Background: An RNA of 177 nucleotides, treated with DMS and 2A3 and read out base by base. Conditions: 150 mM KOAc, 10 mM MgCl2 and 150 mM bicine (pH 8.5), 24 C. Values cover nucleotides 27 to 126. DMS adducts were read by reverse transcription with MarathonRT. Source: RMDB library OK2TRN, as collected in RNAgym.
RNA sequence: GGGAACGACUCGAGUAGAGUCGAAAAGCUGCCUCUGACGUCCUUAAGGGUGGUAAAGCGGGUCUCCCCCGGAAACCGGGACGCGCCUGGCGCUAGCACGGGUAUGCGUGGCGGUCGACCCUGGCCGCCAUAGGUAGCAGUUCGCUGCUACCUAUGGAAAAGAAACAACAACAACAAC
Reactivity to DMS in 0.01 (KOAc 150mM, MgCl2 10mM, bicine 150mM(pH8.5), 24C), signal-to-noise 9, nucleotides 027 to 126: g010c040u000g010c020c010u010c070u000g010a130c070g010u000c020c030u000u010a150a140g010g010g020u000g010g010u000a050a080a120g010c050g010g010g000u000c070u010c070c070c010c020c020g000g000a050a110a080c070c040g000g000g010a050c050g010c060g010c050c030u000g010g010c040g020c110u010a080g000c090a070c070g010g000g010u010a040u010g020c050g020u000g010g010c010g000g010u000c020g000a130c040c030c020u000g000g010c010c020g000
Reactivity to 2A3 in 0.01 (KOAc 150mM, MgCl2 10mM, bicine 150mM(pH8.5), 24C), signal-to-noise 5, nucleotides 027 to 126: g020c020u030g030c010c000u030c050u080g060a080c040g040u030c010c020u100u140a110a110g080g020g020u100g020g040u100a110a070a020g100c030g020g030g070u030c080u070c050c030c000c000c010g050g040a170a070a040c040c000g000g030g020a010c010g000c010g010c010c040u040g050g000c020g020c110u050a030g030c050a030c090g030g000g020u100a050u220g030c050g010u030g040g020c020g000g000u020c020g060a100c000c000c000u010g030g000c010c010g000